[RMDB]
An RNA of 177 nucleotides, treated with DMS and read out base by base. For DMS the reverse transcriptase was MarathonRT. For DMS, 1,486 sequencing reads were counted. Reactivities are rounded to 0.1 and cut off at 0 and 3. Conditions: 150 mM KOAc, 10 mM MgCl2 and 150 mM bicine (pH 8.5), 24 C.
RNA sequence: GGGAACGACUCGAGUAGAGUCGAAAAGGACGUGACAAGCAGGACAUGACAUGGUCCGGUGUGACGGCGAGGACAGAGGAGGCGCGUCCGGCCUUCCUGAACACCUUAGGCUGGUGGGGCUGCGGCAUAACUCUGGGCAAUUCGUUGCCCAGAGUUAAAAAGAAACAACAACAACAAC
Reactivity to DMS in 0.01 (KOAc 150mM, MgCl2 10mM, bicine 150mM(pH8.5), 24C), signal-to-noise 2, nucleotides 027 to 126: g020g040a080c030g010u000g010a060c130a090a100g010c070a160g030g010a020c060a110u010g010a120c180a090u020g000g010u000c000c030g010g000u000g000u000g010a080c100g010g040c070g000a100g010g020a090c050a060g000a110g010g000a040g010g040c060g060c090g010u000c030c030g030g020c090c030u000u010c010c010u010g040a090a090c100a050c010c020u000u030a120g030g020c090u000g010g000u000g000g010g000g010c070u000g000c050g000g000c140a250